[RMDB]
RNA sequence: GGGAACGACUCGAGUAGAGUCGAAAAUUCUUUUGCCAAGACACGGGGUGGACAAUAAGAUUCCUUUACAAAGCACUGGUGUAAGUGUUCGCCUGGUGCUGCAAAAAGCGGCUCACUGGGAAUGGGGACCAUAAGCUAUAUUCGUAUAGCUUAUGGUAAAAGAAACAACAACAACAAC
Reactivity to 2A3 in 0.01 (KOAc 150mM, MgCl2 10mM, bicine 150mM(pH8.5), 24C), signal-to-noise 9, nucleotides 027 to 126: u040u010c000u020u060u030u050g020c020c020a060a020g060a030c020a010c080g030g000g000g000u040g020g030a060c030a060a090u120a120a030g040a070u040u100c010c000u050u090u080a130c110a050a150a020g030c020a010c030u040g010g020u090g080u160a110a110g040u030g050u120u060c020g020c010c000u030g020g010u010g000c010u000g000c010a060a070a040a070a050g050c030g030g000c030u030c050a050c030u020g010g010g020a030a060u070g010g010g010g030
Reactivity to DMS in 0.01 (KOAc 150mM, MgCl2 10mM, bicine 150mM(pH8.5), 24C), signal-to-noise 9, nucleotides 027 to 126: u010u010c020u000u000u010u010g010c030c050a080a080g000a090c080a060c070g000g000g010g020u010g000g000a050c070a060a050u010a060a080g000a120u000u010c020c010u000u010u010a090c170a070a110a070g010c040a020c020u000g000g010u010g010u010a040a090g020u010g010u010u000c050g010c010c010u010g020g010u000g000c010u000g000c110a040a060a050a100a080g010c080g000g000c040u010c060a050c050u000g000g000g000a050a060u010g010g000g010g010